[RMDB]
RNA sequence: GGGAACGACUCGAGUAGAGUCGAAAAUUGUUCAACGUACUCUUUACAUGGGAAAGGAGUUGAAAUAGCUCGUUUCUAUUUGUUCUGACAAUAUUUAGUUUAUUCAUAAUGUUAAGCAUAUCCUGAAUAGUAAAGUUAGAUGUGUCAUACUUGUUAGCUCUAGCGAUGAAUUCGUUCAUCGCUAGAGAAAAGAAACAACAACAACAAC
Reactivity to DMS in 0.01 (KOAc 150mM, MgCl2 10mM, bicine 150mM(pH8.5), 24C), signal-to-noise 1, nucleotides 027 to 156: u010u010g000u000u000c040a130a120c070g040u010a080c060u000c010u010u000u000a040c000a050u000g010g020g000a070a060a050g030g020a120g030u000u000g010a120a210a170u020a110g040c060u010c030g000u010u010u010c020u000a110u000u000u000g030u000u010c090u000g030a060c040a040a070u000a060u000u010u000a080g040u000u010u000a080u030u000c050a080u020a070a060u020g000u000u010a070a130g000c060a030u010a040u000c030c060u000g030a040a060u020a070g020u010a040a080a110g000u000u000a060g050a020u000g010u000g050u000c030a080u000a060c060u000u040g010u020u000a110g040
Reactivity to 2A3 in 0.01 (KOAc 150mM, MgCl2 10mM, bicine 150mM(pH8.5), 24C), signal-to-noise 3, nucleotides 027 to 156: u020u050g020u080u060c030a040a010c030g080u100a040c040u000c000u060u070u120a100c050a070u130g020g000g040a030a010a010g070g030a020g000u050u040g070a150a050a070u120a060g000c010u020c050g130u000u050u030c090u080a190u080u060u070g040u060u050c060u060g040a020c000a040a070u010a050u080u050u010a040g020u060u100u080a090u140u070c030a020u080a210a020u150g020u130u070a070a020g000c010a020u040a020u060c000c050u070g010a050a020u040a050g120u120a120a050a000g020u040u070a030g010a050u050g080u020g030u070c030a040u050a160c060u080u070g020u070u080a010g020
Overview:
Chemical mapping of a 207-nucleotide RNA with DMS and 2A3. The RNA was probed in 150 mM KOAc, 10 mM MgCl2 and 150 mM bicine (pH 8.5) at 24 C. For 2A3, 1,096 sequencing reads were counted. 2A3 adducts were read by reverse transcription with SuperScript II with manganese.